About this RNA
An RNA of 177 nucleotides, treated with 2A3 and DMS and read out base by base.
RNA sequence: GGGAACGACUCGAGUAGAGUCGAAAAAGUUCUCAGAUGUGAUUACCUCAGGUAAGCAGGCUAGAGACAUAACAAUCAGAAUAUUAAAGGAUGUUAUCACAGUUUUGUGAGCAGGGACCUAUUCGAACAUUCCUAAUAGGUUCGCCUAUUAGGAAUGAAAAGAAACAACAACAACAAC
Reactivity to 2A3 in 0.01 (KOAc 150mM, MgCl2 10mM, bicine 150mM(pH8.5), 24C), signal-to-noise 5, nucleotides 027 to 126: a000g020u080u020c010u000c000a020g030a060u070g040u070g070a130u020u060a040c010c040u210c100a050g040g000u020a010a010g020c000a010g090g030c000u070a050g010a010g000a050c020a050u130a060a040c050a040a080u110c030a030g100a190a050u110a070u230u240a130a110a010g070g010a030u030g030u080u120a050u070c000a010c010a040g060u050u200u300u110g030u040g010a010g000c010a020g080g000g040a020c020c020u030a070u070u030c020g010a040a010
Reactivity to DMS in 0.01 (KOAc 150mM, MgCl2 10mM, bicine 150mM(pH8.5), 24C), signal-to-noise 8, nucleotides 027 to 126: a140g010u000u000c010u000c010a070g010a080u000g010u000g010a140u000u000a040c030c020u010c200a110g020g030u000a030a080g010c040a030g010g010c020u010a090g010a070g000a040c070a110u010a060a060c100a060a080u010c080a090g010a090a060u000a100u010u010a060a090a100g010g000a070u000g010u000u000a070u000c020a020c020a050g010u000u010u010u010g030u000g010a040g010c070a050g000g000g010a090c050c040u000a060u000u000c040g000a100a180
Overview: The 2A3 profile rests on 4,992 reads. The reactions ran in a buffer of 150 mM KOAc, 10 mM MgCl2 and 150 mM bicine (pH 8.5), at 24 C.